This 177-nucleotide RNA was probed chemically with DMS and 2A3.

[RMDB]
RNA sequence: GGGAACGACUCGAGUAGAGUCGAAAAGCAUUCAUCUUAUCUAUCAUGCUAACAAAAGUGACCAGUAUGCUUGCUAGAACAAAUGUCAUUUACUGUGAAGAAUGUUCAAUGUAUCACUCAAAAACAAGAUAAUGAGCUCAUUCGUGAGCUCAUUAUCAAAAGAAACAACAACAACAAC
Reactivity to DMS in 0.01 (KOAc 150mM, MgCl2 10mM, bicine 150mM(pH8.5), 24C), signal-to-noise 4, nucleotides 027 to 126: g010c030a050u010u000c060a060u010c070u000u000a120u000c080u000a090u000c070a060u000g000c060u000a060a080c110a050a070a070a100g000u000g000a080c080c060a110g010u000a030u000g020c010u000u000g000c030u010a120g010a030a040c050a010a050a140u040g010u010c010a020u000u000u010a070c220u020g010u000g010a050a070g000a020a170u000g000u000u000c040a100a050u010g000u010a070u010c060a050c050u010c090a030a040a050a060a050c170a100a060
Reactivity to 2A3 in 0.01 (KOAc 150mM, MgCl2 10mM, bicine 150mM(pH8.5), 24C), signal-to-noise 4, nucleotides 027 to 126: g010c000a020u010u040c030a080u070c020u070u150a070u050c030u060a090u040c040a030u110g030c020u070a060a090c050a070a120a060a050g060u050g020a050c020c030a020g050u060a020u070g020c030u040u050g020c010u050a040g000a050a000c020a020a040a030u100g010u010c010a030u040u080u170a130c080u040g020u010g060a050a040g040a020a020u040g010u050u050c040a060a050u080g050u050a080u070c040a050c060u050c020a060a060a060a070a030c030a110a000
The data come from the RNA Mapping Database (RMDB), library OK2TST.
Conditions: 150 mM KOAc, 10 mM MgCl2 and 150 mM bicine (pH 8.5), 24 C.